[RMDB]
RNA sequence: GGGAACGACUCGAGUAGAGUCGAAAAGGCCGAGCUCCAACCCAGGGAGGGAAUAUAUACAAGGUGCGAUUUAAGGCGCAAGUAUGUAUAGGGAAGUGAAGAAGCGCCGAAAACUUCACACGGCCGAGGCACUAUAGUAGUUCGCUACUAUAGUGCCAAAAGAAACAACAACAACAAC
Reactivity to 2A3 in 0.01 (KOAc 150mM, MgCl2 10mM, bicine 150mM(pH8.5), 24C), signal-to-noise 2, nucleotides 027 to 126: g020g000c020c000g010a010g000c050u000c020c000a140a140c020c030c030a030g060g030g030a090g020g040g040a020a000u040a000u010a000u010a030c020a060a240g240g020u020g000c020g000a020u030u180u300a140a040g170g000c000g000c020a020a030g010u010a030u020g050u000a020u040a040g000g020g060a150a060g030u040g010a020a000g040a110a000g110c100g080c050c010g000a020a030a000a000c000u030u020c010a010c020a000c060g000g000c000c000g000a090
Reactivity to DMS in 0.01 (KOAc 150mM, MgCl2 10mM, bicine 150mM(pH8.5), 24C), signal-to-noise 2, nucleotides 027 to 126: g010g030c010c060g000a150g030c030u000c040c020a070a210c030c010c030a150g000g010g020a070g010g000g030a130a040u000a040u010a020u000a000c040a060a180g020g020u000g000c000g020a110u000u000u020a120a060g010g000c010g020c000a060a130g000u010a030u000g000u000a000u000a150g000g010g010a100a130g020u000g000a020a020g000a130a120g010c160g050c120c100g000a040a070a060a100c010u000u010c030a060c050a220c050g010g010c000c000g000a130

Annotation: The record gives the reactivity of an RNA of 177 nucleotides to 2A3 and DMS. Values cover nucleotides 27 to 126. It was measured as part of the RMDB library OK2TRN. The 2A3 profile rests on 1,744 reads. The DMS profile rests on 1,590 reads. DMS (dimethyl sulfate) methylates the pairing face of unpaired adenines and cytosines.